[RMDB]
RNA sequence: GGGAACGACUCGAGUAGAGUCGAAAAAUAAUCUUUUUCACUAAAGUGCUAUGCUUCGUACUGACACACAUAACACAAUACAUAGCAACCAAACAUUACCUAUCGUGUCAUGUAAUCUUGCAUCCGACAGGGAACAACACUUCGGUGUUGUUCCCUGAAAAGAAACAACAACAACAAC
Reactivity to DMS in 0.01 (KOAc 150mM, MgCl2 10mM, bicine 150mM(pH8.5), 24C), signal-to-noise 1, nucleotides 027 to 126: a020u030a070a080u000c030u040u000u000u000u000c070a060c100u000a050a020a120g010u000g020c040u000a010u000g000c200u000u000c100g010u030a080c030u020g000a010c100a060c120a180c070a100u020a050a120c060a020c020a130a050u000a060c020a030u000a030g020c070a010a060c090c060a040a040a040c030a160u000u000a060c130c060u000a010u010c120g000u000g030u000c000a020u000g000u040a060a020u010c070u000u050g000c040a090u000c070c060g000a180
Reactivity to 2A3 in 0.01 (KOAc 150mM, MgCl2 10mM, bicine 150mM(pH8.5), 24C), signal-to-noise 1, nucleotides 027 to 126: a000u210a030a020u190c050u030u020u030u070u110c080a110c060u030a180a000a000g050u000g020c030u060a000u050g010c010u050u070c070g050u020a010c030u110g040a000c000a000c000a000c010a170u150a170a000c110a010c010a140a030u100a050c030a010u000a040g000c070a060a060c000c040a080a000a040c050a030u090u140a030c000c000u000a050u150c060g030u020g050u040c010a000u050g030u000a040a090u070c050u010u030g000c000a030u080c010c030g160a030
The data come from the RNA Mapping Database (RMDB), library OK2TST.
The record gives the reactivity of an RNA of 177 nucleotides to DMS and 2A3.
For 2A3 the reverse transcriptase was SuperScript II with manganese.